[RMDB]
RNA sequence: GGGAACGACUCGAGUAGAGUCGAAAAGACUUGCAGCCCAAGGCAAAGAAGACAAUUCUGAGGUUGGGACAUAGCCAGGCUGCCUUCAAAAGUGAUGACCCAAUCCCAGGGUUUUGCAAAGCUGAACAUCCAUAGAUGAUUUCAGUGCAGAGUAGCACAUUUACCGUCACUUCGGUGACGGUAAAUGAAAAGAAACAACAACAACAAC
Reactivity to DMS in 0.01 (KOAc 150mM, MgCl2 10mM, bicine 150mM(pH8.5), 24C), signal-to-noise 1, nucleotides 027 to 156: g000a020c110u000u010g010c060a190g010c020c020c040a200a170g020g000c040a120a300a200g000a080a050g010a270c040a060a080u020u030c030u020g000a180g030g020u000u000g030g000g030a130c000a090u000a070g000c040c030a140g070g000c080u010g000c000c060u000u000c020a090a080a140a030g010u030g010a100u000g000a070c000c000c000a030a070u000c010c000c000a300g000g020g000u010u000u000u010g050c040a100a130a300g040c000u050g030a100a120c010a030u010c000c170a250u000a120g000a060u000g000a140u000u000u000c030a080g000u010g000c120a080g040a180g000u000a080g000c000a160
Reactivity to 2A3 in 0.01 (KOAc 150mM, MgCl2 10mM, bicine 150mM(pH8.5), 24C), signal-to-noise 2, nucleotides 027 to 156: g110a020c090u100u080g000c030a000g010c010c010c050a100a060g000g010c050a130a020a020g130a100a020g080a090c070a080a300u110u100c070u080g090a090g120g000u030u030g020g030g010a030c010a140u180a010g000c040c060a000g020g000c010u020g030c000c020u140u170c020a060a090a070a010g090u140g100a110u090g070a030c000c030c000a000a060u060c000c000c000a010g050g000g010u010u030u060u020g010c000a020a020a130g010c000u010g000a010a010c010a040u000c050c050a130u130a300g090a130u030g020a020u050u000u000c020a020g020u050g050c020a020g000a030g150u120a020g000c050a010
The record gives the reactivity of an RNA of 207 nucleotides to DMS and 2A3. For 2A3, 877 sequencing reads were counted. For DMS, 1,395 sequencing reads were counted. The reactions ran in a buffer of 150 mM KOAc, 10 mM MgCl2 and 150 mM bicine (pH 8.5), at 24 C. For DMS the reverse transcriptase was MarathonRT. The data come from the RNA Mapping Database (RMDB), library OK3TST.